[RMDB]
RNA sequence: GGGAACGACUCGAGUAGAGUCGAAAAGAUAUGGAUCUAUGGACAUGGCAAGAAACUCGGAAACGAGUUUGUUGCCAACAGCCAUAGAGUCCUAAGUCAAACCCCAAUGUCUUCGGACAUUGGGGAACUGAGCAUACGAGUUCGCUCGUAUGCUCAGAAAAGAAACAACAACAACAAC
Reactivity to DMS in 0.01 (KOAc 150mM, MgCl2 10mM, bicine 150mM(pH8.5), 24C), signal-to-noise 2, nucleotides 027 to 126: g000a040u010a110u020g000g000a300u010c000u000a010u000g000g000a020c020a300u010g020g000c000a000a010g000a000a050a000c000u000c000g020g000a010a030a050c000g010a010g000u000u000u000g000u000u010g030c000c010a040a020c050a110g000c010c000a010u000a020g010a000g010u010c000c000u000a030a040g000u000c010a070a120a250c000c020c000c000a020a000u010g000u000c000u000u000c250g020g010a000c000a000u000u000g000g000g010g010a000a010
Reactivity to 2A3 in 0.01 (KOAc 150mM, MgCl2 10mM, bicine 150mM(pH8.5), 24C), signal-to-noise 1, nucleotides 027 to 126: g000a010u040a010u050g000g000a000u000c000u010a010u020g000g000a050c210a300u300g010g000c040a000a010g090a130a020a010c010u000c000g010g050a020a060a020c000g020a030g000u000u000u010g020u000u010g010c000c010a000a010c010a000g000c000c000a000u000a000g010a000g060u200c000c000u000a060a000g020u000c040a080a020a300c000c000c000c060a000a000u000g020u000c000u050u050c300g110g000a000c000a000u000u000g000g010g000g000a000a050